[RMDB]
RNA sequence: GGGAACGACUCGAGUAGAGUCGAAAAAGGCACAUACUGAAUGCUGAAGUAUACAUAUGCUAUUUCUCUUAAACCUCAGAGCAACCAUAUGAGCAUUGUAAUUAAUAUUCCCAUUUUACAGAUGAGGAAACUGAAGCUAAGAGAAGCUAAGUAAUAAGUAUAUGCUGGAGUUCGCUCCAGCAUAUACAAAAGAAACAACAACAACAAC
Reactivity to 2A3 in 0.01 (KOAc 150mM, MgCl2 10mM, bicine 150mM(pH8.5), 24C), signal-to-noise 3, nucleotides 027 to 156: a000g080g000c110a060c050a070u150a080c070u090g090a110a060u080g030c050u070g030a050a030g060u070a030u030a120c040a030u120a030u080g020c040u070a090u070u100u000c010u010c000u040u080a160a210a150c020c020u070c030a000g020a030g070c020a030a030c080c010a070u100a070u170g050a020g040c030a030u040u060g040u060a060a040u130u100a050a050u040a060u070u060c000c000c010a000u000u000u030u040a080c060a020g120a080u060g020a070g040g030a090a040a010c020u030g020a080a000g050c020u020a060a000g020a020g020a090a010g000c020u020a030a020g000u000a040a150u120a180a010
Reactivity to DMS in 0.01 (KOAc 150mM, MgCl2 10mM, bicine 150mM(pH8.5), 24C), signal-to-noise 1, nucleotides 027 to 156: a140g020g010c010a060c090a070u000a090c080u000g020a060a200u010g040c040u000g030a020a150g050u000a060u000a100c070a170u010a040u010g010c000u000a080u000u000u000c020u000c040u000u000a090a060a090c010c020u000c020a030g000a070g000c040a030a160c060c020a100u000a140u000g010a080g000c060a030u000u020g000u010a040a050u000u000a060a100u000a200u010u000c010c000c000a170u000u000u000u010a150c170a210g020a090u010g030a050g040g020a050a150a200c070u000g000a010a030g000c030u020a060a090g020a030g000a130a020g050c070u000a050a090g020u000a030a030u000a030a140

Chemical mapping of a 207-nucleotide RNA with 2A3 and DMS.
The DMS profile rests on 2,005 reads.
Reactivities are given for positions 27 through 156.
The reactions ran in a buffer of 150 mM KOAc, 10 mM MgCl2 and 150 mM bicine (pH 8.5), at 24 C.